[RMDB]
RNA sequence: GGGAACGACUCGAGUAGAGUCGAAAACGAUCAGUACGUUCGCGUACUGAUCGAAGCUUCUGGAGACAGAAGCAAGUCGCUGACCUAAUUAGGCGGAAGUUAGGCACCCAUUUAGUUGGCCCCUCUAAAUGACAGCGACGACCGCCUUGGGGCCUAAUAGGAUGAAUGGAUUCGUCCAUUCAUCCUAAAAAGAAACAACAACAACAAC
Reactivity to DMS in 0.01 (KOAc 150mM, MgCl2 10mM, bicine 150mM(pH8.5), 24C), signal-to-noise 1, nucleotides 027 to 156: c010g000a010u000c000a020g010u000a000c010g010u010u020c300g030c000g040u000a000c010u000g000a000u000c010g030a060a150g020c000u000u000c000u000g010g010a300g020a300c000a030g010a030a000g010c020a030a040g000u010c010g000c040u000g010a280c010c000u000a020a030u020u000a020g000g020c040g020g000a110a100g000u000u000a000g000g010c000a090c280c020c010a040u000u000u000a040g010u000u000g000g000c000c030c010c030u030c000u000a000a030a050u020g010a070c030a040g000c030g000a030c040g030a170c070c040g000c080c090u000u000g010g030g010g030c000c010u020a010a130

Source: RMDB library OK3TST, as collected in RNAgym. Chemical mapping of a 207-nucleotide RNA with DMS. Values cover nucleotides 27 to 156. DMS adducts were read by reverse transcription with MarathonRT.